[RMDB]
RNA sequence: GGGAACGACUCGAGUAGAGUCGAAAAACACACACACGUGAUUCUUUGUGAUAGGUCCCAGAUCAAGUGACAUCUGGGGUACUUGACAUAGAUCUAUCAUCAAAAGAAUCAUGUGAAUGUGUGAGAAGAUAGUUAGCAGUUUCGACUGUUAGCUAUCAAAAGAAACAACAACAACAAC
Reactivity to 2A3 in 0.01 (KOAc 150mM, MgCl2 10mM, bicine 150mM(pH8.5), 24C), signal-to-noise 9, nucleotides 027 to 126: a000c000a000c000a000c000a000c000a000c000g010u000g000a000u000u000c000u010u000u010g010u000g000a000u000a000g010g010u020c030c040c030a030g030a160u020c030a060a070g040u070g150a060c030a080u120c140u200g050g020g070g040u040a030c010u020u040g020a020c010a100u230a030g020a000u000c000u000a000u000c000a010u040c050a020a030a010a030g000a000a000u000c000a000u000g000u000g010a070a090u020g000u000g000u010g000a020g020a020a020
Reactivity to DMS in 0.01 (KOAc 150mM, MgCl2 10mM, bicine 150mM(pH8.5), 24C), signal-to-noise 9, nucleotides 027 to 126: a090c000a010c000a000c020a050c000a000c000g030u000g000a000u000u000c000u000u000u010g010u010g010a010u000a000g000g000u000c010c120c180a110g010a170u000c010a010a010g010u010g010a060c050a180u040c180u030g020g010g020g020u010a000c010u000u000g000a010c050a140u050a120g000a010u000c000u000a000u000c000a010u040c120a050a020a010a010g010a010a010u000c000a000u000g000u000g000a080a050u000g010u000g010u000g000a100g000a090a090
An RNA of 177 nucleotides, treated with 2A3 and DMS and read out base by base.
The 2A3 profile rests on 157,245 reads.
The data come from the RNA Mapping Database (RMDB), library OK1LIB.
Values cover nucleotides 27 to 126.
The reactions ran in a buffer of 150 mM KOAc, 10 mM MgCl2 and 150 mM bicine (pH 8.5), at 24 C.